RNA sequence: GGGAACGACUCGAGUAGAGUCGAAAAGAUAUGGAGCAGAGAGCAACAGCGAUGACGUCGGAAACGACGUAUCGACAUGCUCGAUCUCCUAAGUCAAAAGUUACCUGAGGUUCGCCUCAGGUAACAAGAACGGGCAAUACUUCGGUAUUGCCCGUUCAAAAGAAACAACAACAACAAC
Reactivity to DMS in 0.01 (KOAc 150mM, MgCl2 10mM, bicine 150mM(pH8.5), 24C), signal-to-noise 1, nucleotides 027 to 126: g020a030u000a230u040g000g010a000g000c120a060g010a300g000a020g040c000a070a120c300a130g020c010g000a040u000g010a040c000g000u000c010g030g010a030a050a120c020g010a010c010g000u040a010u000c000g010a040c160a160u010g010c000u000c000g020a180u000c000u020c000c000u000a020a090g000u040c010a060a080a110a090g000u010u000a010c000c010u000g010a010g020g000u020u000c190g000c010c000u000c000a000g010g010u000a000a000c010a070a070
Reactivity to 2A3 in 0.01 (KOAc 150mM, MgCl2 10mM, bicine 150mM(pH8.5), 24C), signal-to-noise 1, nucleotides 027 to 126: g020a000u000a010u120g000g020a020g000c290a000g130a000g000a000g080c060a130a300c190a260g140c020g010a000u040g300a090c000g010u000c010g050g000a000a060a010c000g020a010c010g000u020a010u000c000g060a140c060a150u090g000c000u010c000g000a000u020c000u000c000c000u000a040a010g020u000c040a010a000a000a220g000u000u000a010c000c000u000g030a000g080g000u020u110c260g140c050c000u010c010a000g010g000u010a000a000c000a050a000

Chemical mapping of a 177-nucleotide RNA with DMS and 2A3. The 2A3 profile rests on 1,454 reads.